Conditions: 150 mM KOAc, 10 mM MgCl2 and 150 mM bicine (pH 8.5), 24 C. The record gives the reactivity of an RNA of 177 nucleotides to 2A3 and DMS. The 2A3 profile rests on 4,092 reads. Values cover nucleotides 27 to 126. For DMS the reverse transcriptase was MarathonRT.

[RMDB]
RNA sequence: GGGAACGACUCGAGUAGAGUCGAAAAUUGCAUUGGGUGAGAUAGAGAAUGAAUUCAAGAGCCAUGGUUUCACAAGUCGUGCCGAUUUGGAUCUAGUGCUUGACACUAUAACAAACAUAUUCACAAAUAAUAUAAUGCUGUUCGCAGCAUUAUAUUAAAAAGAAACAACAACAACAAC
Reactivity to 2A3 in 0.01 (KOAc 150mM, MgCl2 10mM, bicine 150mM(pH8.5), 24C), signal-to-noise 4, nucleotides 027 to 126: u070u050g010c020a020u020u100g060g010g010u060g050a070g000a050u070a060g070a020g040a110a100u110g020a050a080u140u060c050a070a050g010a010g070c020c010a030u040g060g020u010u100u090c040a040c010a040a050g030u040c030g020u060g040c020c020g050a070u020u000u040g020g010a000u040c010u030a020g000u010g040c010u080u170g030a090c000a000c020u060a040u040a160a010c030a040a050a020c040a050u160a180u120u120c020a030c010a060a080a020
Reactivity to DMS in 0.01 (KOAc 150mM, MgCl2 10mM, bicine 150mM(pH8.5), 24C), signal-to-noise 7, nucleotides 027 to 126: u010u010g020c050a100u000u000g010g010g020u000g010a080g000a090u010a080g010a110g010a100a090u010g010a090a100u010u010c080a070a090g000a090g010c100c030a050u000g010g000u000u000u000c060a060c070a060a060g010u000c050g020u000g010c080c050g000a100u000u000u000g000g010a100u010c220u000a030g010u000g010c020u010u010g020a150c020a020c030u000a010u010a080a130c030a040a030a050c100a080u010a090u000u000c040a060c070a060a050a160

Record summary: 2A3 adducts were read by reverse transcription with SuperScript II with manganese.